[RMDB]
RNA sequence: GGGAACGACUCGAGUAGAGUCGAAAACGUACGUGGAGACACGUACGACGAGGCUUCGGUCUCGAAUCGCAUGAACUUGGGCCAUGCGCGCGCGAGGCGUCGGUGCUCGGCGAGCGCACGGACGCAAAAACUCGCGCGUAAAUAAAUAGCUUAAGAACCUACUCCACUCAUUCGUGAGUGGAGUAGGAAAAGAAACAACAACAACAAC
Reactivity to 2A3 in 0.01 (KOAc 150mM, MgCl2 10mM, bicine 150mM(pH8.5), 24C), signal-to-noise 1, nucleotides 027 to 156: c000g010u000a010c000g000u000g020g020a040g000a050c000a010c000g000u000a000c000g000a010c020g000a000g010g000c000u010u180c290g130g020u000c000u000c000g070a080a070u090c040g020c000a000u010g060a260a250c000u030u000g000g010g000c010c000a000u000g000c010g000c000g000c000g030c010g030a000g000g090c000g000u010c110g090g000u020g000c030u030c030g090g100c300g040a100g030c010g000c040a020c020g110g000a010c010g000c000a120a110a090a090a000c000u010c010g000c020g010c000g000u030a000a000a000u060a000a050a090u180a010g020c040u030u010a000a000g010a010a030